[RMDB]
RNA sequence: GGGAACGACUCGAGUAGAGUCGAAAAGGGGUCCAGGUAGAUCGAUUCAUCGCAUCGAUCAUGGCUGAAGCCUCCACGGCCAUGGGAGCGAUGCAUCGAUCUAUAAUCUGGACGGAGGCACCCAAAAGUAACAAUUAGUUUCGACUAAUUGUUACAAACUCUAUGCACGUUUCGACGUGCAUAGAGUAAAAGAAACAACAACAACAAC
Reactivity to 2A3 in 0.01 (KOAc 150mM, MgCl2 10mM, bicine 150mM(pH8.5), 24C), signal-to-noise 3, nucleotides 027 to 156: g020g010g070g030u020c000c010a000g010g020u020a010g010a000u000c000g010a010u030u020c010a000u010c000g000c010a060u300c110g000a010u010c000a000u000g000g000c000u020g020a090a020g010c000c010u000c010c000a000c000g000g020c010c000a000u000g000g000g010a020g000c000g000a000u000g010c000a000u000c000g000a000u000c000u000a000u000a000a000u000c010u000g000g000a000c000g000g000a000g000g000c000a030c010c000c000a040a090a020a020g000u000a000a000c000a000a000u000u010a000g030u020u090u130c280g070a020c000u020a000a000u000u000g000u010u000a000c000a010a000
Reactivity to DMS in 0.01 (KOAc 150mM, MgCl2 10mM, bicine 150mM(pH8.5), 24C), signal-to-noise 2, nucleotides 027 to 156: g000g000g040g000u000c010c000a040g010g010u000a010g010a030u000c000g010a040u010u010c010a050u000c040g030c010a300u000c130g010a100u000c000a010u000g000g000c000u000g020a070a160g000c000c000u000c000c010a300c050g010g020c010c010a000u010g010g000g010a040g040c020g000a020u000g000c170a020u010c000g020a030u000c020u000a030u000a050a060u000c030u000g000g000a010c030g000g040a010g120g040c050a100c020c000c010a080a110a180a140g010u000a000a000c010a010a020u000u000a000g010u010u010u020c290g020a080c020u000a010a000u010u000g000u000u000a000c010a050a110
The record gives the reactivity of an RNA of 207 nucleotides to 2A3 and DMS. Reactivities are given for positions 27 through 156. The reactions ran in a buffer of 150 mM KOAc, 10 mM MgCl2 and 150 mM bicine (pH 8.5), at 24 C. For DMS, 3,581 sequencing reads were counted.